[RMDB]
RNA sequence: GGGAACGACUCGAGUAGAGUCGAAAAAGGAGCACCGGGAAAAAGAAAAGAAGGCAAGGAAUUGGUAGAAAAGAGCGAGCCUCCCGAUACGAGUUUGCCAGGACCUAUCAAGUUUGGAGUCAUCCGGAGAGACAUAGAUUCGUCUAUGUCAAAAGAAACAACAACAACAAC
Reactivity to DMS in 0.01 (KOAc 150mM, MgCl2 10mM, bicine 150mM(pH8.5), 24C), signal-to-noise 9, nucleotides 027 to 129: a050g030g010a030g000c040a060c030c040g000g000g000a020a050a070a100a090g010a070a060a040a070g010a050a050g000g000c070a030a030g010g000a040a040u040u020g000g010u000a030g030a040a040a060a060g010a030g030c110g010a040g000c060c020u020c040c030c020g000a100u030a030c150g010a050g010u000u030u030g010c010c000a070g000g020a060c050c030u010a040u020c050a020a040g010u020u010u020g000g030a060g000u010c060a070u020c030c030g010g010a050g000a120
Reactivity to 2A3 in 0.01 (KOAc 150mM, MgCl2 10mM, bicine 150mM(pH8.5), 24C), signal-to-noise 9, nucleotides 027 to 129: a000g040g000a010g000c010a010c030c000g010g010g010a050a080a010a020a030g100a010a080a000a000g060a030a010g010g000c040a010a010g020g010a040a060u120u070g040g030u110a060g080a040a110a050a010g050a010g030c060g010a010g000c000c010u030c010c010c010g030a010u050a100c070g000a030g060u020u070u060g040c010c000a020g000g030a030c000c010u030a050u080c030a070a060g030u040u090u080g040g000a010g000u030c010a040u010c020c010g010g000a050g010a010

Description: This 170-nucleotide RNA was probed chemically with DMS and 2A3. 2A3 adducts were read by reverse transcription with SuperScript II with manganese. The RNA was probed in 150 mM KOAc, 10 mM MgCl2 and 150 mM bicine (pH 8.5) at 24 C. Reactivities are rounded to 0.1 and cut off at 0 and 3.